[RMDB]
RNA sequence: GGGAACGACUCGAGUAGAGUCGAAAAGAUAUGGAAUGUGUGAGGGAGCUGGUGGUCGGAAACGACCAUACCAGCAUCGAUCUCACCAUUCCUAAGUCAAACGCUCAUCUCUUCGGAGAUGAGCGAACUUACUGUGGUACUUCGGUACCACAGUAAGAAAAGAAACAACAACAACAAC
Reactivity to DMS in 0.01 (KOAc 150mM, MgCl2 10mM, bicine 150mM(pH8.5), 24C), signal-to-noise 3, nucleotides 027 to 126: g000a030u010a130u010g000g000a000a000u000g000u020g040u000g010a010g020g010g020a050g050c000u000g010g020u000g010g010u000c010g010g010a000a020a060c000g000a010c030c000a060u000a050c300c000a010g000c020a140u000c290g000a030u000c000u020c010a000c010c000a010u000u000c000c000u000a000a060g010u010c020a090a120a200c020g010c000u000c000a000u000c000u000c010u000u020c190g050g010a050g020a000u000g000a000g010c000g000a010a050
Reactivity to 2A3 in 0.01 (KOAc 150mM, MgCl2 10mM, bicine 150mM(pH8.5), 24C), signal-to-noise 2, nucleotides 027 to 126: g000a000u000a000u040g000g020a020a000u000g200u030g010u010g040a010g020g060g040a100g000c010u000g000g010u020g000g000u020c000g000g010a010a010a010c010g000a000c000c010a040u160a120c040c000a010g000c010a000u220c040g010a030u010c000u010c000a010c000c000a010u000u000c000c000u000a020a010g000u000c030a160a090a070c010g000c010u010c000a010u000c000u000c000u030u150c300g160g000a020g000a010u010g000a010g010c010g000a000a000
Chemical mapping of a 177-nucleotide RNA with DMS and 2A3.
The reactions ran in a buffer of 150 mM KOAc, 10 mM MgCl2 and 150 mM bicine (pH 8.5), at 24 C.
The 2A3 profile rests on 8,001 reads.
It was measured as part of the RMDB library TTRDES.
Values cover nucleotides 27 to 126.
As a SHAPE reagent, 2A3 marks flexible, mostly unpaired nucleotides at the ribose 2'-OH.